This 177-nucleotide RNA was probed chemically with 2A3 and DMS. For 2A3, 8,841 sequencing reads were counted. For 2A3 the reverse transcriptase was SuperScript II with manganese. For DMS the reverse transcriptase was MarathonRT.

RNA sequence: GGGAACGACUCGAGUAGAGUCGAAAAUUUCGAUUCGAACCUAGGGGAAUGGGCGAACAAGUGGGUGAGGAGCCAAUUUAUCGUCAAAUUGCAGGCUCGUUCACAAGGGCAGACGGAACUAGAGCGACCCUAAUGAGUAUUUCGAUACUCAUUAGGGAAAAGAAACAACAACAACAAC
Reactivity to 2A3 in 0.01 (KOAc 150mM, MgCl2 10mM, bicine 150mM(pH8.5), 24C), signal-to-noise 5, nucleotides 027 to 126: u050u030u010c020g030a020u040u030c020g020a050a040c010c030u050a060g000g000g000g070a090a160u090g020g010g030c030g030a050a050c080a150a050g040u050g030g020g030u040g030a050g020g030a000g020c010c000a020a010u070u100u050a170u130c090g070u030c020a030a030a070u050u090g030c020a020g050g060c000u000c020g040u060u030c040a020c040a090a050g010g020g000c010a020g020a040c030g020g020a040a030c020u040a070g020a020g130c050g040a070
Reactivity to DMS in 0.01 (KOAc 150mM, MgCl2 10mM, bicine 150mM(pH8.5), 24C), signal-to-noise 6, nucleotides 027 to 126: u000u000u000c020g000a090u000u000c040g010a100a190c070c030u000a100g010g000g010g010a110a070u000g010g010g000c100g000a070a070c130a060a100g010u000g010g010g020u000g010a060g020g000a070g010c030c010a050a060u000u010u000a080u010c180g020u000c130a040a040a060u000u010g010c150a160g000g000c020u000c010g000u000u000c050a050c100a080a100g010g010g000c060a080g000a070c080g010g000a060a080c100u000a100g010a130g010c080g000a190